Chemical mapping of a 207-nucleotide RNA with 2A3 and DMS.
For 2A3 the reverse transcriptase was SuperScript II with manganese.
The data come from the RNA Mapping Database (RMDB), library RNAMAK.
The reactions ran in a buffer of 150 mM KOAc, 10 mM MgCl2 and 150 mM bicine (pH 8.5), at 24 C.

RNA sequence: GGGAACGACUCGAGUAGAGUCGAAAACGCUGGGCAUUCCAGUUUCGGUAAUUCUACUCCUCUGAAGCGCGCACGGAGGAGGUAGUGCCAGAAAUAGGAAUGCCUGUGCUGAAGCGCGCACGGCAACCGAAAGGUGCGGGAGGUCUCUUCGGAGACCGAGCCUUCCAUUAUUCGUAAUGGAAGGCUCAAAAGAAACAACAACAACAAC
Reactivity to 2A3 in 0.01 (KOAc 150mM, MgCl2 10mM, bicine 150mM(pH8.5), 24C), signal-to-noise 3, nucleotides 027 to 156: c020g000c010u020g010g000g000c000a000u000u000c020c000a090g040u000u000u000c010g000g010u060a130a140u240u090c040u070a140c000u000c000c000u020c000u040g050a230a070g000c020g000c000g000c020a010c020g000g000a010g000g000a010g010g000u010a010g020u020g020c040c030a120g050a000a010a020u210a200g000g000a000a000u000g000c010c000u000g010u030g000c010u070g040a090a030g000c010g000c000g000c020a010c030g080g000c040a110a110c030c000g040a130a030a010g030g000u020g010c000g030g040g030a100g000g000u000c000u000c000u020u130c220g120g000a000g000a000c000c000
Reactivity to DMS in 0.01 (KOAc 150mM, MgCl2 10mM, bicine 150mM(pH8.5), 24C), signal-to-noise 2, nucleotides 027 to 156: c070g010c010u000g000g010g050c010a010u010u000c000c000a290g020u000u000u000c000g020g000u000a020a050u000u000c030u010a060c000u000c000c010u000c000u000g000a040a080g010c030g050c030g060c010a300c010g000g030a040g010g020a010g040g010u010a040g030u000g000c000c020a200g000a010a020a090u000a270g030g000a030a000u000g020c010c000u000g010u000g000c000u000g010a120a070g020c070g000c000g050c000a210c060g000g000c010a090a150c030c010g000a080a090a130g050g030u000g000c000g000g010g000a090g040g010u000c000u000c010u000u010c300g030g000a030g020a010c010c020